Source: RMDB library OK2TST, as collected in RNAgym. The record gives the reactivity of an RNA of 177 nucleotides to 2A3 and DMS. DMS adducts were read by reverse transcription with MarathonRT. The 2A3 profile rests on 4,946 reads. For 2A3 the reverse transcriptase was SuperScript II with manganese.
[RMDB]
RNA sequence: GGGAACGACUCGAGUAGAGUCGAAAAUUUUUUGUGAACGGAUCAACACAACUAUAUUCCGCUGCAUCGCGUUAAAACCAACUUGUGUGAAAAAAUUGAACUGGCCGCGGUGCAACAAAGCCAUCCGAGUCAUAACUGAUUUCGAUCAGUUAUGACUAAAAGAAACAACAACAACAAC
Reactivity to 2A3 in 0.01 (KOAc 150mM, MgCl2 10mM, bicine 150mM(pH8.5), 24C), signal-to-noise 4, nucleotides 027 to 126: u010u020u030u030u040u030g020u000g020a120a020c020g020g000a020u060c070a090a030c000a010c000a020a030c020u030a010u010a050u290u030c010c020g030c090u020g010c010a010u010c010g000c000g050u050u110a100a110a050a040c020c010a010a080c050u110u090g060u030g020u060g270a120a070a020a040a070a080u090u130g030a100a040c060u020g050g000c020c000g010c010g020g030u010g000c010a000a000c000a010a030a000g010c030c020a010u030c000c020g010
Reactivity to DMS in 0.01 (KOAc 150mM, MgCl2 10mM, bicine 150mM(pH8.5), 24C), signal-to-noise 4, nucleotides 027 to 126: u000u010u000u020u000u000g010u010g010a120a300c030g000g000a020u000c080a070a060c000a010c020a020a020c160u010a040u010a160u000u000c030c030g030c080u000g000c010a030u010c010g020c000g000u010u000a050a060a150a130c080c020a050a060c130u000u000g020u010g030u010g000a000a040a070a060a090a110u000u000g000a060a070c100u000g010g000c230c020g020c010g010g010u000g000c000a020a030c050a050a090a100g020c130c130a120u000c010c020g010